[RMDB]
RNA sequence: GGGAACGACUCGAGUAGAGUCGAAAAUUAAAGCCAUUCGUGGCUUUAAACUCUGGUGUCCCGAAAUGGCUCGUGCGCGAUCCCACGCGAACCAGUUUUCGAUUAAGGAUAAGUUCGCUUAUCCUAAGAUAGAGUUUCUUUUCGAAGAAACUCUAUCAAAAGAAACAACAACAACAAC
Reactivity to 2A3 in 0.01 (KOAc 150mM, MgCl2 10mM, bicine 150mM(pH8.5), 24C), signal-to-noise 1, nucleotides 027 to 126: u030u000a050a000a000g010c020c000a010u050u020c200g050u050g000g000c000u010u000u000a020a030a020c040u010c070u070g060g030u060g070u000c020c040c000g010a130a150a040u080g040g000c020u020c070g070u060g020c030g030c010g070a070u010c010c010c000a020c010g020c000g030a040a060c010c010a060g050u010u000u020u100c060g030a080u220u090a090a010g000g000a000u000a000a010g020u060u170c160g000c120u000u000a000u000c000c000u000a030a000
Reactivity to DMS in 0.01 (KOAc 150mM, MgCl2 10mM, bicine 150mM(pH8.5), 24C), signal-to-noise 3, nucleotides 027 to 126: u010u000a000a010a000g020c000c000a030u000u000c170g040u000g000g000c000u000u000u000a000a040a110c130u000c050u010g020g010u010g000u000c010c010c020g010a030a060a090u010g010g010c020u010c060g020u010g020c030g020c030g010a150u010c030c030c010a190c050g020c010g010a040a050c050c060a080g010u000u000u000u000c050g010a190u010u000a120a060g010g000a010u000a020a000g010u010u010c220g020c000u010u000a010u000c000c000u000a040a050